[RMDB]
Structure probing data (2A3 and DMS) for a 177-nucleotide construct. The RNA was probed in 150 mM KOAc, 10 mM MgCl2 and 150 mM bicine (pH 8.5) at 24 C. For DMS the reverse transcriptase was MarathonRT. Source: RMDB library OK2TST, as collected in RNAgym. The 2A3 profile rests on 1,963 reads.
RNA sequence: GGGAACGACUCGAGUAGAGUCGAAAAAAUUCUCCUCUUUUCCAUUCUAAAUUUGCUUUACAAUUCGUUUCCGAUAAAUAAGGUUCUUUUUGUGCAGGUAUAGAAAUGAUUCCGGAGCCUACAAAUCACCCUACGUUAUAUUCGUAUAACGUAGGGUAAAAGAAACAACAACAACAAC
Reactivity to 2A3 in 0.01 (KOAc 150mM, MgCl2 10mM, bicine 150mM(pH8.5), 24C), signal-to-noise 2, nucleotides 027 to 126: a020a000u110u040c000u010c000c020u030c010u030u050u050u010c020c000a040u030u030c010u050a110a070a150u050u020u050g000c000u090u060u100a030c030a030a060u000u040c010g050u020u020u030c010c020g030a070u100a160a160a020u190a120a030g000g020u040u020c000u020u080u010u040u050g060u020g020c040a020g010g050u050a090u000a090g110a040a130a010u070g020a050u060u050c030c020g020g030a000g060c000c020u050a030c010a020a120a020u130c060
Reactivity to DMS in 0.01 (KOAc 150mM, MgCl2 10mM, bicine 150mM(pH8.5), 24C), signal-to-noise 3, nucleotides 027 to 126: a100a100u000u000c020u000c010c020u000c010u010u000u000u000c020c040a140u000u000c040u010a070a070a080u000u000u000g010c030u010u010u000a060c050a080a070u000u000c000g010u000u000u000c000c000g010a120u000a020a050a080u000a100a130g010g000u000u000c010u000u000u000u000u000g040u000g000c050a020g000g010u000a050u000a090g010a060a060a080u000g010a160u000u000c070c060g020g020a110g010c060c030u010a050c120a040a090a100u010c140